An RNA of 177 nucleotides, treated with DMS and 2A3 and read out base by base. 2A3 adducts were read by reverse transcription with SuperScript II with manganese. It was measured as part of the RMDB library OK2TST. In probing experiments dimethyl sulfate is read out at A N1 and C N3, which are open when not base-paired. For DMS, 23,529 sequencing reads were counted. For DMS the reverse transcriptase was MarathonRT.
[RMDB]
RNA sequence: GGGAACGACUCGAGUAGAGUCGAAAAGAUGAGGGCCUUCGUGUCGAUGAGUUUGCCCCGACCGGUGUUGACGAUGAAAACUCCCUUUUUCAUGAGAGAGAGGCUCUCGUCGUUGAUCAGGUGGAUGCCGAUAUCCUAUAUUCGUAUAGGAUAUCGGAAAAGAAACAACAACAACAAC
Reactivity to DMS in 0.01 (KOAc 150mM, MgCl2 10mM, bicine 150mM(pH8.5), 24C), signal-to-noise 9, nucleotides 027 to 126: g000a030u010g010a050g000g000g000c000c020u000u000c050g020u010g020u000c020g010a050u010g010a150g010u000u000u010g010c040c010c010c050g000a030c030c040g020g020u010g010u000u000g010a040c020g010a030u000g000a030a020a050a080c070u000c010c010c010u010u000u010u000u000c110a080u000g000a130g010a100g000a100g000a050g010g000c050u000c020u000c000g020u000c010g010u010u000g000a080u000c100a110g000g010u000g000g010a160u000g010
Reactivity to 2A3 in 0.01 (KOAc 150mM, MgCl2 10mM, bicine 150mM(pH8.5), 24C), signal-to-noise 6, nucleotides 027 to 126: g030a030u050g000a030g010g020g000c030c000u030u060c060g150u060g020u110c030g010a040u080g020a030g100u040u130u160g070c000c000c000c000g030a030c010c010g080g090u170g030u090u070g010a020c020g010a020u030g020a010a020a030a050c030u080c010c010c000u010u020u000u020u080c050a080u170g010a060g000a000g010a010g000a000g120g000c010u000c000u000c020g000u000c000g000u030u070g030a100u080c060a020g060g050u050g030g020a050u100g040